[RMDB]
RNA sequence: GGGAACGACUCGAGUAGAGUCGAAAACCAAUACAAGUUUAAUGGCUACAUACGGCACUCAGUUUACACUUACAUUACAUAUGCAUUUUAACACAUCAACUAUAACACCUUUAUUUAAGUCUGUUGUCCAAUAUGGUAUGUUCGCAUACCAUAUUGGAAAAGAAACAACAACAACAAC
Reactivity to DMS in 0.01 (KOAc 150mM, MgCl2 10mM, bicine 150mM(pH8.5), 24C), signal-to-noise 1, nucleotides 027 to 126: c010c030a090a120u040a070c180a040a180g010u010u020u000a100a030u010g000g020c010u010a050c060a070u010a050c080g040g000c030a050c050u000c060a070g000u000u010u010a080c150a060c040u010u010a090c030a060u010u020a050c090a090u000a050u000g010c060a050u000u000u000u000a060a070c090a090c040a050u000c070a070a010c040u000a060u000a050a070c130a040c110c020u000u000u000a070u050u010u000a070a080g000u010c040u010g010u030u010g000u030
Reactivity to 2A3 in 0.01 (KOAc 150mM, MgCl2 10mM, bicine 150mM(pH8.5), 24C), signal-to-noise 4, nucleotides 027 to 126: c000c000a000a000u180a050c070a070a070g060u060u090u130a130a030u110g040g000c010u010a020c040a070u070a060c040g020g010c030a010c020u130c030a030g010u050u070u070a040c010a010c020u070u080a020c000a080u030u070a020c030a040u150a020u110g050c030a050u010u030u060u120a070a020c040a000c000a030u030c020a030a080c020u040a040u040a150a030c030a050c020c020u080u070u070a120u060u200u030a080a010g030u000c030u040g120u060u070g040u030